The record gives the reactivity of an RNA of 207 nucleotides to DMS and 2A3.
RNA sequence: GGGAACGACUCGAGUAGAGUCGAAAAUGUCCCACGCAGGCAUGCUGUAUGCCAAGUGCGGCGGUGUAUCAUCAGGUAAUGCUAUCACAGCGUUGGGUAACUCACUCAUCGUUUUGAUGCACACUAGUGUAGCUUGUCUAAGGACAGUGCUUAAAAACAUCCAACAACAGUUCGCUGUUGUUGGAUGAAAAGAAACAACAACAACAAC
Reactivity to DMS in 0.01 (KOAc 150mM, MgCl2 10mM, bicine 150mM(pH8.5), 24C), signal-to-noise 1, nucleotides 027 to 156: u000g010u000c000c000c010a150c190g020c010a250g020g010c020a090u010g040c050u010g000u010a120u000g030c070c030a110a170g040u010g010c000g070g030c060g020g000u000g030u010a090u020c000a090u000c060a060g020g030u000a170a060u000g020c030u020a080u000c030a120c070a080g010c040g040u000u000g010g020g000u010a140a140c260u000c120a060c010u020c000a040u000c000g020u020u000u000u000g010a100u010g000c000a050c000a140c060u010a060g030u010g020u000a100g010c020u000u000g010u000c020u010a080a090g030g020a070c030a130g040u020g000c040u020u010a070a020a090a140a120
Reactivity to 2A3 in 0.01 (KOAc 150mM, MgCl2 10mM, bicine 150mM(pH8.5), 24C), signal-to-noise 3, nucleotides 027 to 156: u130g040u030c000c020c000a000c030g060c040a040g000g000c030a050u070g020c040u120g120u190a070u100g060c030c060a090a020g080u040g060c040g040g000c040g070g030u080g010u070a090u100c030a020u030c040a040g010g040u170a170a060u110g000c120u140a030u120c000a020c040a010g000c010g000u000u010g040g000g000u070a130a150c090u070c130a000c000u000c000a010u000c020g010u050u000u030u000g000a000u010g000c000a000c010a020c050u030a110g030u020g020u140a020g030c000u010u000g010u000c020u020a050a090g130g000a010c020a030g100u020g070c050u090u130a060a100a000a000a010
Record summary:
DMS adducts were read by reverse transcription with MarathonRT. For 2A3, 1,649 sequencing reads were counted. Reactivities are given for positions 27 through 156. It was measured as part of the RMDB library OK3TST. The reactions ran in a buffer of 150 mM KOAc, 10 mM MgCl2 and 150 mM bicine (pH 8.5), at 24 C.